[RMDB]
The record gives the reactivity of an RNA of 207 nucleotides to 2A3 and DMS.
The DMS profile rests on 3,528 reads.
The reactions ran in a buffer of 150 mM KOAc, 10 mM MgCl2 and 150 mM bicine (pH 8.5), at 24 C.
Source: RMDB library RSTRND, as collected in RNAgym.
RNA sequence: GGGAACGACUCGAGUAGAGUCGAAAAGGUCGGUUCUUUCCGGAUGGGAAGGGUUUAAGGUAUAGUCCGUUACAAACUGCAGUACAUUUUAGAUGUACGUCUGCUUGGUCUGCUUAUAGCUUUAUCUCACUGAGAUAAAGGUAAAGGGAGCCUGCGGCAUCUGUUCGAAGUUCGCUUCGAACAGAUGAAAAGAAACAACAACAACAAC
Reactivity to 2A3 in 0.01 (KOAc 150mM, MgCl2 10mM, bicine 150mM(pH8.5), 24C), signal-to-noise 4, nucleotides 027 to 156: g060g000u100c040g020g010u070u060c010u010u100u010c030c020g090g070a110u140g050g020g030a040a040g040g020g000u020u080u110a100a020g040g020u060a040u060a140g070u010c000c020g030u090u080a030c040a090a150a020c070u100g030c030a020g020u010a010c010a030u000u050u060u200a160g050a100u010g000u010a020c010g030u000c010u020g020c030u060u090g010g010u070c010u030g140c020u100u080a100u050a250g030c000u000u010u000a010u000c000u010c030a300c210u170g000a000g000a010u000a000a010a000g030g010u000a030a030a020g010g000g000a000g050c000c000u010g000c010g000g000
Reactivity to DMS in 0.01 (KOAc 150mM, MgCl2 10mM, bicine 150mM(pH8.5), 24C), signal-to-noise 1, nucleotides 027 to 156: g010g010u010c040g000g030u000u000c030u010u010u010c000c080g020g000a120u020g030g010g000a070a100g010g010g030u000u010u000a110a140g000g020u000a090u000a080g020u010c040c040g020u000u010a180c060a050a030a110c100u010g000c080a140g020u000a010c020a020u000u000u020u000a130g020a060u010g000u010a000c010g000u020c070u000g010c020u000u000g010g010u000c020u000g010c030u000u000a190u010a090g000c000u010u000u000a010u000c000u000c010a200c180u000g020a070g020a020u000a000a020a000g020g020u000a030a090a180g010g000g030a070g010c040c020u000g030c020g000g000